[RMDB]
RNA sequence: GGGAACGACUCGAGUAGAGUCGAAAAGCUGCCAUGGGCAUGGCCAGCCUCCAACAUUGCCAGUGGCCAGGGAGUAGGCGGGAGUGGCCAGGAAGUCAGGUGGCGAUUUCUGUGGCCUUUGGCAUCAUCAACCAGGUAAAUUCGUUUACCUGGUUGAAAAAGAAACAACAACAACAAC
Reactivity to DMS in 0.01 (KOAc 150mM, MgCl2 10mM, bicine 150mM(pH8.5), 24C), signal-to-noise 8, nucleotides 027 to 126: g010c090u000g010c010c010a050u000g000g010g020c050a160u010g010g000c050c070a070g000c080c020u000c030c040a130a130c150a100u010u010g010c020c020a090g020u000g010g010c010c040a100g000g010g010a120g010u010a080g000g010c130g010g000g010a080g020u000g010g010c000c010a200g000g010a040a050g000u000c030a100g020g020u000g010g020c060g000a030u000u000u000c020u000g020u010g010g010c000c000u000u000u010g010g010c020a050u010c110a170
Reactivity to 2A3 in 0.01 (KOAc 150mM, MgCl2 10mM, bicine 150mM(pH8.5), 24C), signal-to-noise 4, nucleotides 027 to 126: g030c030u020g000c000c010a040u060g060g040g050c080a030u020g040g000c050c020a050g040c030c000u030c030c010a090a070c040a190u110u200g030c020c020a070g110u070g100g000c000c030a020g010g060g030a110g040u190a080g030g060c050g010g030g000a090g050u070g020g040c010c010a000g030g040a040a020g040u050c050a030g060g140u060g110g030c040g000a000u010u030u000c010u030g200u120g070g020c010c000u020u060u010g030g000c010a020u050c010a040